[RMDB]
Overview:
Chemical mapping of a 207-nucleotide RNA with 2A3 and DMS. The data come from the RNA Mapping Database (RMDB), library OK3TST. The reactions ran in a buffer of 150 mM KOAc, 10 mM MgCl2 and 150 mM bicine (pH 8.5), at 24 C. The DMS profile rests on 3,583 reads. DMS adducts were read by reverse transcription with MarathonRT. The 2A3 profile rests on 1,691 reads.
RNA sequence: GGGAACGACUCGAGUAGAGUCGAAAAAAGUCCAUAUGCCCACCUUCGCUGCGGCGGGUGGAUGCUUAUACAUGCUAUGGAUGCCUACAUUUGAAAUAAUGUAGAUGCCUAAUACUCUCUCUCAGGGAGAGAGUUUAGAUGCCUCCAAAGCCGAUGCCCUAAAUACGGGAUUCGUCCCGUAUUUAGGAAAAGAAACAACAACAACAAC
Reactivity to 2A3 in 0.01 (KOAc 150mM, MgCl2 10mM, bicine 150mM(pH8.5), 24C), signal-to-noise 3, nucleotides 027 to 156: a000a000g080u030c030c000a020u050a030u140g000c000c000c000a010c000c030u140u110c040g030c030u110g050c060g040g000c000g000g010g040u000g000g020a020u110g000c020u140u100a040u040a130c130a120u190g020c010u080a030u060g000g000a000u010g000c000c000u000a000c000a010u020u010u040g150a100a110a070u160a040a010u050g000u000a010g010a060u140g020c000c000u000a040a020u140a090c000u000c000u010c000u000c000u020c140a130g020g300g000a000g010a000g000a000g000u000u000u000a000g000a000u060g000c030c030u030c020c000a110a050a010g000c000c010g060a050u060g020c000
Reactivity to DMS in 0.01 (KOAc 150mM, MgCl2 10mM, bicine 150mM(pH8.5), 24C), signal-to-noise 1, nucleotides 027 to 156: a060a000g020u010c010c010a130u000a120u000g030c000c010c010a030c030c010u000u000c000g010c060u010g030c200g030g000c000g000g050g020u000g010g000a020u000g020c030u010u000a100u010a060c090a110u000g020c020u000a150u000g000g000a050u010g030c050c000u010a010c000a030u010u000u010g010a180a140a110u000a030a000u000g010u000a000g000a120u000g020c050c010u000a050a070u010a040c000u020c000u010c000u000c010u010c100a280g050g040g010a020g020a000g000a020g010u010u000u010a010g020a100u000g010c050c040u000c010c040a030a110a110g020c030c090g010a090u000g000c090